[RMDB]
RNA sequence: GGGAACGACUCGAGUAGAGUCGAAAAAACGGAAACGAAUCUGACACACUGGUGGUCUGGCAAAGCAGUGGUCACAGUGGCUGGCCAGGGACGAGAGCCGAGAGCCGGGGAAGGGUAAGCCAGAAUCUAGUUGCUACUAGUUCGCUAGUAGCAACUAAAAAGAAACAACAACAACAAC
Reactivity to DMS in 0.01 (KOAc 150mM, MgCl2 10mM, bicine 150mM(pH8.5), 24C), signal-to-noise 3, nucleotides 027 to 126: a070a050c060g000g000a040a060a060c060g000a080a060u020c070u010g020a050c080a090c090a070c040u000g000g010u000g020g030u000c000u000g010g000c000a080a100a080g040c070a070g010u010g000g000u010c050a060c090a200g010u020g000g000c100u000g010g010c010c050a120g020g000g000a040c100g020a110g000a220g030c020c010g020a120g000a090g000c050c060g000g030g000g010a080a080g000g000g000u010a030a110g000c000c020a040g000a080a120u040c080
Reactivity to 2A3 in 0.01 (KOAc 150mM, MgCl2 10mM, bicine 150mM(pH8.5), 24C), signal-to-noise 3, nucleotides 027 to 126: a000a000c110g010g040a030a040a000c020g040a010a040u020c020u060g040a020c010a010c010a010c200u070g110g000u050g020g040u040c030u020g030g030c010a090a080a020g030c020a030g090u010g060g000u060c020a030c000a050g140u140g050g000c010u000g030g010c000c030a040g090g000g000a000c040g040a050g010a020g150c000c020g070a070g010a030g120c050c010g000g000g000g060a040a040g060g000g000u070a040a010g010c000c010a010g010a000a000u020c060